[RMDB]
RNA sequence: GGGAACGACUCGAGUAGAGUCGAAAAGGUGGAGAUGCCAUGCCGACCCGAAGAGGAAGAAGAGGACAUGGACGCGAACCGUGAGUGGAACCCUCGAUCCUUUAUUGGGGGGUACACUCGAGGAGUGCAUUAUGAGCGAGUUCGCUCGCUCAUAAUGAAAAGAAACAACAACAACAAC
Reactivity to 2A3 in 0.01 (KOAc 150mM, MgCl2 10mM, bicine 150mM(pH8.5), 24C), signal-to-noise 2, nucleotides 027 to 126: g080g000u090g020g060a130g000a100u110g050c000c010a010u020g000c010c000g060a050c000c000c000g070a150a050g030a080g090g030a050a040g010a050a030g040a050g030g020a030c000a030u050g030g000a010c050g000c020g040a030a050c020c020g050u050g000a010g010u020g040g000a140a050c020c000c000u000c010g050a080u110c030c110u150u300u190a040u030u060g010g010g010g000g000g000u030a000c000a000c000u000c000g000a060g030g030a070g010u080g020
Reactivity to DMS in 0.01 (KOAc 150mM, MgCl2 10mM, bicine 150mM(pH8.5), 24C), signal-to-noise 3, nucleotides 027 to 126: g000g030u000g010g010a180g010a120u000g000c040c010a030u000g020c040c010g020a160c060c000c030g020a110a130g010a130g000g010a100a050g000a080a110g000a140g000g000a140c030a030u000g010g010a080c080g010c070g010a090a090c020c030g000u010g000a040g010u000g000g000a170a210c010c000c000u000c000g010a020u010c300c230u000u010u010a050u000u000g010g000g030g000g000g000u000a090c010a000c020u000c010g010a100g010g000a110g010u000g000